[RMDB]
The record gives the reactivity of an RNA of 177 nucleotides to 2A3 and DMS.

RNA sequence: GGGAACGACUCGAGUAGAGUCGAAAAGAUAUGGACAAUGCUUUGGGAGGUGAUUGUCGGAAACGACAAAUACCAUCGAUCAAAGAACUACAUUGUCCUAAGUCAAACUGCCAGUUCGCUGGCAGAACGGAGUAGUCAGGUUCGCCUGACUACUCCGAAAAGAAACAACAACAACAAC
Reactivity to 2A3 in 0.01 (KOAc 150mM, MgCl2 10mM, bicine 150mM(pH8.5), 24C), signal-to-noise 1, nucleotides 027 to 126: g040a060u110a020u160g000g000a000c000a000a000u000g030c070u040u020u010g040g020g010a090g000g060u000g020a040u000u030g020u080c020g020g020a080a100a010c030g010a010c010a000a070a020u260a080c020c050a100u070c000g050a000u090c020a000a030a030g000a060a040c110u290a010c130a000u010u000g050u000c000c040u000a060a010g040u000c010a140a040a050c010u010g000c000c010a020g050u070u050c300g050c130u000g030g000c010a000g000a000a000
Reactivity to DMS in 0.01 (KOAc 150mM, MgCl2 10mM, bicine 150mM(pH8.5), 24C), signal-to-noise 2, nucleotides 027 to 126: g000a020u010a300u000g000g010a030c000a020a000u000g020c030u000u000u020g000g020g030a300g040g010u000g020a200u000u000g000u000c000g010g000a050a130a180c010g010a010c000a010a100a150u010a280c270c000a010u000c050g000a300u010c060a060a060a050g000a090a000c050u080a300c010a030u000u010g010u000c000c030u000a090a080g000u010c030a100a100a280c000u000g000c000c000a000g010u000u010c300g060c000u000g040g020c040a000g020a000a080
Conditions: 150 mM KOAc, 10 mM MgCl2 and 150 mM bicine (pH 8.5), 24 C. The data come from the RNA Mapping Database (RMDB), library TTRDES. Reactivities are given for positions 27 through 126. For DMS, 787 sequencing reads were counted.